Chemical mapping of a 177-nucleotide RNA with DMS and 2A3.
For 2A3, 4,817 sequencing reads were counted.
The reactions ran in a buffer of 150 mM KOAc, 10 mM MgCl2 and 150 mM bicine (pH 8.5), at 24 C.
RNA sequence: GGGAACGACUCGAGUAGAGUCGAAAAGAUAUGGAGAAAGCUUUUGACGAGAGAACGGGUCGGAAACGACCCAAUCUCGAUAAGCUUCUCCUAAGUCAAAAGUUCAUUAUGUUCGCAUAAUGAACAAGAACCUAAUGAUCUUCGGAUCAUUAGGUUCAAAAGAAACAACAACAACAAC
Reactivity to DMS in 0.01 (KOAc 150mM, MgCl2 10mM, bicine 150mM(pH8.5), 24C), signal-to-noise 3, nucleotides 027 to 126: g000a050u000a300u010g000g000a020g020a020a030a020g020c010u000u020u020u010g010a170c120g000a060g000a020g000a080a040c300g020g010g010u000c000g000g000a060a050a210c020g010a010c000c000c000a000a050u000c000u000c000g020a090u000a010a010g000c010u000u000c010u000c000c000u000a010a060g000u020c030a120a090a090a100g000u000u000c000a000u000u000a010u010g000u000u010c280g010c000a000u000a000a010u000g000a010a000c000a060a050
Reactivity to 2A3 in 0.01 (KOAc 150mM, MgCl2 10mM, bicine 150mM(pH8.5), 24C), signal-to-noise 3, nucleotides 027 to 126: g020a010u040a040u130g020g000a000g040a050a140a000g030c010u110u130u200u220g260a200c050g020a030g000a000g030a270a090c160g000g010g020u030c010g000g000a070a060a030c010g000a000c000c020c000a010a030u000c000u010c000g020a000u010a000a000g000c000u010u000c000u000c000c000u010a160a020g020u000c020a030a060a020a180g010u000u000c010a000u010u000a010u010g020u060u070c230g000c150a000u000a010a010u020g010a000a000c000a010a020